[RMDB]
RNA sequence: GGGAACGACUCGAGUAGAGUCGAAAACUGGGUUUAGACCGUCGUGAGACAGGUUAGUUUUACCCUACUGUUGUCAAUUGUUUGCGUAAUAGUAGCAUGAUUUAGUACGAGAGGAACUGUCAUGCCGGAUCACUGGUCUGUAGGUUUAUUUGACAAAGAAAUUAAGUAUCUUCGGAUACUUAAUUUCAAAAGAAACAACAACAACAAC
Reactivity to DMS in 0.01 (KOAc 150mM, MgCl2 10mM, bicine 150mM(pH8.5), 24C), signal-to-noise 3, nucleotides 027 to 156: c050u000g010g030g010u000u000u000a090g010a020c000c000g010u010c020g030u000g010a300g020a020c020a090g120g000u000u000a060g010u010u000u000u010a070c000c000c000u000a080c060u010g000u000u000g000u000c030a100a240u010u000g020u010u000u000g040c030g010u000a070a100u000a130g000u000a040g050c010a020u000g000a030u000u010u000a070g050u010a110c050g000a300g000a250g050g000a130a100c120u000g000u000c020a020u000g020c010c020g080g020a100u000c050a080c060u000g030g010u000c010u000g010u010a060g050g010u000u000u000a070u010u000u010g010a070c060a060a100a240
Reactivity to 2A3 in 0.01 (KOAc 150mM, MgCl2 10mM, bicine 150mM(pH8.5), 24C), signal-to-noise 2, nucleotides 027 to 156: c020u010g000g000g020u010u040u160a030g000a000c010c000g000u000c040g020u070g100a090g010a010c060a170g000g020u010u040a030g010u010u030u040u150a060c010c010c000u040a040c030u050g050u040u000g010u020c020a070a060u050u080g030u090u080u090g070c050g060u080a050a070u060a180g120u070a030g010c010a000u020g020a020u040u060u020a030g000u020a010c040g000a020g000a040g160g000a040a000c010u030g000u020c000a000u020g000c020c000g050g000a030u050c040a060c230u140g070g040u080c030u020g050u060a020g070g000u060u170u000a080u050u080u060g020a020c010a010a080a040